[RMDB]
RNA sequence: GGGAACGACUCGAGUAGAGUCGAAAAGAUAUGGACGAAUUGGGAGCAACAGCUACCUCGUCGGAAACGACGAGGGUAGACAUGCUUAGAUUCGUCCUAAGUCAAAACAGUACCUUCGGGUACUGAAUCUCGGUUAAGUGUUCGCACUUAACCGAGAAAAAGAAACAACAACAACAAC
Reactivity to 2A3 in 0.01 (KOAc 150mM, MgCl2 10mM, bicine 150mM(pH8.5), 24C), signal-to-noise 1, nucleotides 027 to 126: g000a000u020a000u080g010g010a020c000g030a000a050u110u080g300g300g120a000g000c070a080a150c070a230g000c020u010a000c010c000u010c000g000u000c000g020g050a010a060a010c000g020a000c040g000a010g100g000g000u000a000g000a000c020a170u300g020c000u000u000a000g000a020u000u000c000g000u000c000c000u010a030a000g000u000c010a000a050a060a140c010a010g000u000a000c000c000u040u100c300g160g000g000u030a000c020u020g000a000a070
Reactivity to DMS in 0.01 (KOAc 150mM, MgCl2 10mM, bicine 150mM(pH8.5), 24C), signal-to-noise 2, nucleotides 027 to 126: g050a050u000a300u000g000g000a000c000g030a010a020u000u000g010g000g010a000g000c010a040a090c300a300g000c000u000a030c000c000u000c000g000u020c010g000g000a050a090a180c000g000a050c000g010a030g000g020g000u010a000g000a070c160a230u000g020c000u030u000a300g000a020u070u000c000g000u000c000c000u010a010a060g010u010c020a060a100a090a300c000a000g050u000a000c000c000u000u000c190g030g050g000u000a000c000u030g030a040a080